Structure probing data (2A3 and DMS) for a 177-nucleotide construct. For 2A3, 3,679 sequencing reads were counted. It was measured as part of the RMDB library TTRDES. DMS adducts were read by reverse transcription with MarathonRT. Conditions: 150 mM KOAc, 10 mM MgCl2 and 150 mM bicine (pH 8.5), 24 C.
RNA sequence: GGGAACGACUCGAGUAGAGUCGAAAAGAUAUGGAGAUAUCCACACAGGUCUAAGACAGUGGUUCGGAAACGAACCAUCGAGACCGUGUGGAGUAUCUCCUAAGUCAAAGAUCAGUUCGCUGAUCAACAUUGCACGUAACUUCGGUUACGUGCAAUGAAAAGAAACAACAACAACAAC
Reactivity to 2A3 in 0.01 (KOAc 150mM, MgCl2 10mM, bicine 150mM(pH8.5), 24C), signal-to-noise 2, nucleotides 027 to 126: g020a020u090a070u200g000g000a010g010a000u000a010u070c000c010a000c000a000c050a150g000g000u020c000u070a150a080g150a070c130a090g060u010g040g000u000u020c020g070g040a030a050a070c000g000a000a000c050c000a000u000c000g050a000g010a000c000c000g020u010g000u000g030g000a000g000u000a000u000c000u020c000c000u020a080a010g010u000c020a120a070a080g000a060u000c000a010g030u090u170c300g010c210u010g010a010u020c010a010a040
Reactivity to DMS in 0.01 (KOAc 150mM, MgCl2 10mM, bicine 150mM(pH8.5), 24C), signal-to-noise 3, nucleotides 027 to 126: g000a000u010a300u010g000g010a020g000a000u000a020u000c000c000a000c000a010c020a150g040g000u000c000u010a200a150g020a090c300a120g010u000g000g000u000u000c040g040g000a170a150a160c000g000a020a010c000c000a000u000c040g020a010g010a000c000c000g000u010g020u010g000g000a050g030u000a000u000c000u010c000c000u000a000a020g020u010c080a110a140a060g000a000u000c020a010g020u000u000c270g040c030u020g000a000u000c000a090a250